[RMDB]
RNA sequence: GGGAACGACUCGAGUAGAGUCGAAAACCGUGACCCUGUGGGAUUUUGUUUGUCAAAUACCCCCUGUAAUGUCUGUCAAUAUUGGAUUGGAUAUGGGUGCAAUUGUGACUCGCUUAGGCAAGCAGCAAAACACAACUCUUCGGAGUUGUGAAAAGAAACAACAACAACAAC
Reactivity to 2A3 in 0.01 (KOAc 150mM, MgCl2 10mM, bicine 150mM(pH8.5), 24C), signal-to-noise 9, nucleotides 027 to 129: c000c000g040u060g090a050c000c010c030u040g010u120g030g020g030a080u030u030u040u060g160u040u060u160g190u100c020a030a010a040u190a140c000c000c000c000c010u030g080u100a080a060u090g030u030c030u010g050u020c010a050a080u070a140u200u180g150g010a060u070u110g040g000a030u040a060u170g060g010g000u020g010c000a020a070u030u060g050u020g030a020c000u000c040g010c040u040u060a030g000g040c010a020a010g000c000a010g010c010a030a020a120a010
Reactivity to DMS in 0.01 (KOAc 150mM, MgCl2 10mM, bicine 150mM(pH8.5), 24C), signal-to-noise 5, nucleotides 027 to 129: c000c000g040u020g000a070c000c000c000u000g000u050g000g010g050a130u010u010u020u010g030u020u030u050g000u040c010a060a060a060u000a200c060c030c000c020c030u000g020u000a050a010u040g010u030c010u040g000u030c060a040a020u020a050u030u010g030g000a000u010u020g030g010a050u030a060u000g000g010g030u030g030c060a030a080u000u000g020u000g010a010c000u020c080g010c050u000u000a070g040g000c050a030a040g020c080a030g000c120a040a030a080a160

Source: RMDB library 15KLIB, as collected in RNAgym. Chemical mapping of a 170-nucleotide RNA with 2A3 and DMS.